[RMDB]
RNA sequence: GGGAACGACUCGAGUAGAGUCGAAAAUCUUCAUCGAUUGGACUCCGCCUGCGAUUCGCAGUCUUGUCCUUGCUGCGAAUGUGUAAAGCAGGGAUGCAGCGACGCAAACAUUACGCCUGGCAAGCUCUCCAUGCGGAUUAUUCGUAAUCCGCAUGGAAAAAGAAACAACAACAACAAC
Reactivity to DMS in 0.01 (KOAc 150mM, MgCl2 10mM, bicine 150mM(pH8.5), 24C), signal-to-noise 2, nucleotides 027 to 126: u030c000u010u000c110a020u050c170g030a100u020u010g000g020a110c060u000c040c130g000c010c010u000g060c010g020a010u010u000c000g000c020a100g040u030c240u020u000g000u000c010c000u000u010g030c000u010g000c050g020a080a070u010g030u080g000u030a090a070a110g000c020a020g000g000g030a040u000g030c050a030g000c000g000a030c040g000c040a140a060a150c190a050u060u040a100c060g000c020c000u040g030g010c000a180a160g040c030u030c120
Reactivity to 2A3 in 0.01 (KOAc 150mM, MgCl2 10mM, bicine 150mM(pH8.5), 24C), signal-to-noise 5, nucleotides 027 to 126: u050c030u140u090c050a130u110c050g150a130u040u080g050g030a020c050u010c020c020g030c000c010u000g000c010g080a110u030u040c000g000c000a010g070u050c060u100u120g010u010c000c000u020u050g010c000u020g010c000g050a200a130u180g120u020g070u150a140a120a010g000c010a010g000g030g010a030u090g010c070a040g020c020g030a040c010g000c020a050a140a070c040a060u110u300a030c050g030c000c000u010g030g000c000a020a000g030c000u000c000
The record gives the reactivity of an RNA of 177 nucleotides to DMS and 2A3.
The DMS profile rests on 2,672 reads.
For 2A3, 3,475 sequencing reads were counted.
For 2A3 the reverse transcriptase was SuperScript II with manganese.
Source: RMDB library OK1LIB, as collected in RNAgym.